[RMDB]
RNA sequence: GGGAACGACUCGAGUAGAGUCGAAAACGCACGCUGGCACCCGUUCGCACCGACGCUCAGGGCCUGGCGACUUUUUCUUUACGUGACGGCGAGCAGCUCAGCGUGCGCGGCCAAGUGACGCUGGGCGGAGAAGCAUCCUUUUCGAAGGAUGCUUCUCAAAAGAAACAACAACAACAAC
Reactivity to DMS in 0.01 (KOAc 150mM, MgCl2 10mM, bicine 150mM(pH8.5), 24C), signal-to-noise 4, nucleotides 027 to 126: c040g010c040a020c020g020c000u000g010g020c060a200c200c130c060g000u000u020c010g000c040a110c080c060g000a170c050g000c070u000c070a110g020g030g000c070c030u000g010g020c020g010a110c040u010u000u000u000u000c060u000u000u000a140c080g010u010g010a080c070g000g010c030g000a070g010c060a120g000c040u000c020a020g000c000g020u000g000c000g010c030g000g000c030c040a110a100g010u010g010a100c030g020c020u000g000g000g020c020g030
Reactivity to 2A3 in 0.01 (KOAc 150mM, MgCl2 10mM, bicine 150mM(pH8.5), 24C), signal-to-noise 3, nucleotides 027 to 126: c010g000c010a010c020g000c010u000g000g000c020a120c030c080c040g030u050u040c010g010c050a100c060c040g120a070c020g040c010u050c080a060g030g110g000c000c010u020g020g000c030g020a110c010u150u080u020u040u020c060u030u130u090a060c070g040u040g070a020c010g020g000c020g010a020g000c030a030g000c030u020c150a000g000c020g010u030g030c000g000c010g000g010c010c020a080a030g100u070g060a020c010g020c030u020g020g010g030c040g020